Description
The record gives the reactivity of an RNA of 177 nucleotides to DMS. The reactions ran in a buffer of 150 mM KOAc, 10 mM MgCl2 and 150 mM bicine (pH 8.5), at 24 C.
RNA sequence: GGGAACGACUCGAGUAGAGUCGAAAAUUAAAUGCAAGGAUGAUUAAUGAGAAUGAACUUCCCAAUAUAAGAAUAUCUGCAAUGUUAACUGCAUAUGUGAAGUUUAACAAAGGAAGUUUGACCAGAGACAAAGAGUUGUUUUCGAACAACUCUUUGUAAAAGAAACAACAACAACAAC
Reactivity to DMS in 0.01 (KOAc 150mM, MgCl2 10mM, bicine 150mM(pH8.5), 24C), signal-to-noise 3, nucleotides 027 to 126: u000u000a030a090a110u010g000c060a050a080g000g030a080u000g000a080u000u010a070a070u000g000a090g000a090a100u010g010a060a100c060u000u000c000c010c030a050a100u010a090u000a060a090g000a150a080u000a060u000c040u010g010c040a040a060u010g020u010u000a040a040c100u000g000c030a060u010a070u010g000u000g000a030a110g010u000u000u010a020a030c080a040a150a120g000g000a040a030g010u000u000u000g010a170c060c050a090g000a130g010
The DMS profile rests on 1,747 reads.